[RMDB]
This 207-nucleotide RNA was probed chemically with 2A3 and DMS.
For 2A3 the reverse transcriptase was SuperScript II with manganese.
For DMS, 4,581 sequencing reads were counted.
Conditions: 150 mM KOAc, 10 mM MgCl2 and 150 mM bicine (pH 8.5), 24 C.
The data come from the RNA Mapping Database (RMDB), library RNAMAK.

RNA sequence: GGGAACGACUCGAGUAGAGUCGAAAAACCUGACGUGUUCGCACGUCAGGUAAAAACCGUAGGGUCCACAUUUGUAAGCGCAGAUACGCUUCGAAAGAGGCGUGUAGCUUGUGUGUGACCCUAAACGGAAAAAUCAAUGUUAUUCGUAACAUUGAAAAGCUAUUCAAGUAUUCGUACUUGAAUAGCUAAAAGAAACAACAACAACAAC
Reactivity to 2A3 in 0.01 (KOAc 150mM, MgCl2 10mM, bicine 150mM(pH8.5), 24C), signal-to-noise 4, nucleotides 027 to 156: a010c000c000u000g000a000c020g000u010g030u110u180c300g050c140a000c000g010u000c000a010g000g000u010a000a020a000a010a000c030c000g020u020a020g030g010g000u000c020c000a010c010a040u070u120u300g280u210a040a010g000c050g030c120a010g030a230u070a030c000g000c000u010u000c020g080a170a090a060g010a000g000g000c000g000u010g010u030a030g000c000u000u010g010u000g000u000g100u180g000a000c010c000c000u000a000a000a000c010g030g050a060a090a020a020a010u060c000a000a000u010g010u010u020a050u080u120c290g090u080a000a000c000a000u000u000g020a050a110a010
Reactivity to DMS in 0.01 (KOAc 150mM, MgCl2 10mM, bicine 150mM(pH8.5), 24C), signal-to-noise 2, nucleotides 027 to 156: a060c000c000u000g010a020c020g060u000g020u000u000c300g060c020a000c000g000u000c000a000g020g000u000a000a000a020a070a020c020c000g030u000a060g000g030g010u010c000c000a020c020a060u020u000u010g010u000a040a040g030c010g020c120a170g010a110u000a030c000g000c000u000u000c010g000a100a040a270g010a030g010g030c010g000u010g050u000a240g020c010u010u030g050u000g000u000g040u000g020a130c000c000c000u000a000a020a030c030g000g000a020a020a040a120a130u010c010a020a020u000g010u000u000a040u000u010c220g000u010a020a000c000a020u010u000g000a040a090a150